[RMDB]
RNA sequence: GGGAACGACUCGAGUAGAGUCGAAAACCUUCAGCAGGCACAUCACAAGUAUUCAGCAAGCGUUCAGGACCAAGGUUGCUCGGAUGUCUUGGCUCAUUGCACCACGCAACAAACUGUCGCUUGGCGACUCGAGGGCUCUUUUCGGCCCUCGAGUCAAAAAAGAAACAACAACAACAAC
Reactivity to DMS in 0.01 (KOAc 150mM, MgCl2 10mM, bicine 150mM(pH8.5), 24C), signal-to-noise 5, nucleotides 027 to 126: c030c010u000u020c090a070g020c030a080g000g000c020a030c050a020u040c040a080c120a100a080g010u010a050u000u010c090a100g000c020a040a060g000c010g020u020u000c030a040g000g000a190c090c070a060a110g020g020u000u020g000c060u010c110g010g010a100u000g000u010c050u010u010g000g000c100u010c050a090u000u000g000c010a040c050c060a090c130g000c000a030a020c090a020a080a110c060u020g000u000c040g010c010u010u000g000g020c210g010a000
Reactivity to 2A3 in 0.01 (KOAc 150mM, MgCl2 10mM, bicine 150mM(pH8.5), 24C), signal-to-noise 4, nucleotides 027 to 126: c000c000u030u040c030a030g030c010a020g060g020c010a030c000a080u090c030a020c010a170a020g070u070a190u170u140c010a010g030c000a040a000g010c000g040u090u050c010a010g000g050a060c050c040a060a060g140g020u010u030g010c020u010c040g040g010a090u030g040u010c030u080u110g130g100c040u030c040a030u020u080g000c010a040c040c000a030c070g030c000a010a030c050a110a140a040c020u020g000u030c000g010c020u000u030g030g000c000g000a000